[RMDB]
Chemical mapping of a 177-nucleotide RNA with DMS and 2A3.
For 2A3 the reverse transcriptase was SuperScript II with manganese.
Reactivities are rounded to 0.1 and cut off at 0 and 3.
The RNA was probed in 150 mM KOAc, 10 mM MgCl2 and 150 mM bicine (pH 8.5) at 24 C.
RNA sequence: GGGAACGACUCGAGUAGAGUCGAAAAGAUAUGGAACCACUCUUCUUUUGACGAAGGGUGUUCGGAAACGAACACCGCUUCGAUAAGAAGGUGGUUCCUAAGUCAAAAGGGGGUCUUCGGACCCCCAGAUACAAGUCAAGUUCGCUUGACUUGUAUCAAAAGAAACAACAACAACAAC
Reactivity to DMS in 0.01 (KOAc 150mM, MgCl2 10mM, bicine 150mM(pH8.5), 24C), signal-to-noise 6, nucleotides 027 to 126: g000a020u000a300u010g010g000a010a000c010c000a000c000u020c000u000u000c000u000u000u010u010g020a240c150g000a010a010g010g000g010u000g010u000u000c000g010g010a070a080a160c000g010a020a010c000a000c000c000g010c000u000u000c000g000a150u010a010a010g010a010a010g010g030u000g000g000u000u000c000c000u000a010a090g000u000c030a080a090a150a200g010g010g010g010g020u000c000u000u020c230g020g010a010c000c000c000c000c000a000
Reactivity to 2A3 in 0.01 (KOAc 150mM, MgCl2 10mM, bicine 150mM(pH8.5), 24C), signal-to-noise 4, nucleotides 027 to 126: g010a000u050a020u090g000g000a010a000c020c000a000c080u300c020u070u030c010u110u260u210u300g300a250c100g000a010a000g030g000g000u010g000u010u000c000g010g010a020a040a010c010g000a010a010c010a000c010c010g190c140u000u000c000g030a050u080a090a000g000a000a000g010g000u000g000g000u000u000c000c010u000a000a000g000u010c000a030a010a070a240g010g020g000g010g000u010c030u080u080c190g070g030a020c000c000c000c000c000a010